The record gives the reactivity of an RNA of 207 nucleotides to 2A3. For 2A3, 694 sequencing reads were counted. Conditions: 150 mM KOAc, 10 mM MgCl2 and 150 mM bicine (pH 8.5), 24 C. It was measured as part of the RMDB library OK3TST. Values cover nucleotides 27 to 156.

[RMDB]
RNA sequence: GGGAACGACUCGAGUAGAGUCGAAAACGAUCCUCGAGAGAGGAUCGACGAGUCUUCGGACUCGAUUACCGCGUCGAUGUGCCGCGGGGCUACGAUGGUAUUGUGGGAAAGAAUACCAUUGUACCUUCUUGUCGUAGCCGAACAACUAGCACGUCCAGGACCCUGACGAGUUCGCUCGUCAGGGUCCAAAAGAAACAACAACAACAAC
Reactivity to 2A3 in 0.01 (KOAc 150mM, MgCl2 10mM, bicine 150mM(pH8.5), 24C), signal-to-noise 1, nucleotides 027 to 156: c030g000a000u000c000c000u010c000g010a010g000a000g000a020g000g000a000u000c000g020a050c000g000a000g010u020c030u090u140c220g060g000a000c000u000c000g020a050u020u140a170c000c000g000c010g070u090c180g000a020u000g000u000g040c000c000g000c000g030g060g000g030c020u000a000c000g000a000u200g010g000u000a000u030u040g020u020g030g000g170a020a240a160g140a060a210u130a050c000c000a020u020u010g000u020a000c000c000u150u130c070u160u250g010u000c000g000u000a000g000c000c000g000a050a020c050a070a060c060u120a000g040c000a000c030g000u040c020c020a000